[RMDB]
RNA sequence: GGGAACGACUCGAGUAGAGUCGAAAAUCCUAAGUCGUUUAGGGAGCUGGGAGUUCUCAUCGAUCAUUAUCGGAAACGAUAAUGGGAGAGAACGAACAGCGUUGAUCUAAACGAUAUGGAAAACUUUCUGCACCUUGUUCGCAAGGUGCAGAAAGAAGUAGGUGUUUAUGUUCGCAUAAACACCUACAAAAGAAACAACAACAACAAC
Reactivity to 2A3 in 0.01 (KOAc 150mM, MgCl2 10mM, bicine 150mM(pH8.5), 24C), signal-to-noise 3, nucleotides 027 to 156: u000c000c000u020a140a020g020u000c000g010u000u000u000a010g010g000g010a010g010c000u000g020g000g010a070g010u030u010c020u020c040a300u260c030g050a030u060c010a010u000u000a000u000c010g030g040a110a040a040c020g010a000u000a010a000u000g000g030g000a050g000a060g000a000a000c000g000a030a040c050a020g000c020g010u010u010g000a000u000c000u010a000a000a010c000g000a000u010a060u050g030g020a050a090a050a060c000u000u000u000c000u000g000c000a000c000c000u000u020g010u080u070c200g020c210a000a000g010g000u000g000c000a000g000a000a000a000g000a020a010
Reactivity to DMS in 0.01 (KOAc 150mM, MgCl2 10mM, bicine 150mM(pH8.5), 24C), signal-to-noise 2, nucleotides 027 to 156: u000c020c000u010a160a260g030u000c010g020u010u000u010a030g000g000g020a050g030c000u000g000g000g000a300g020u000u000c000u000c030a220u030c150g010a120u030c010a010u000u010a000u000c000g010g000a130a200a250c020g020a000u000a050a010u030g010g060g000a090g020a070g010a000a010c010g000a300a300c020a050g030c000g000u000u000g000a050u030c010u000a000a030a040c010g010a010u000a110u020g000g000a090a050a050a170c030u000u010u000c000u000g000c010a020c000c000u010u000g020u000u000c300g050c030a040a000g000g060u000g000c000a010g010a010a000a000g000a000a130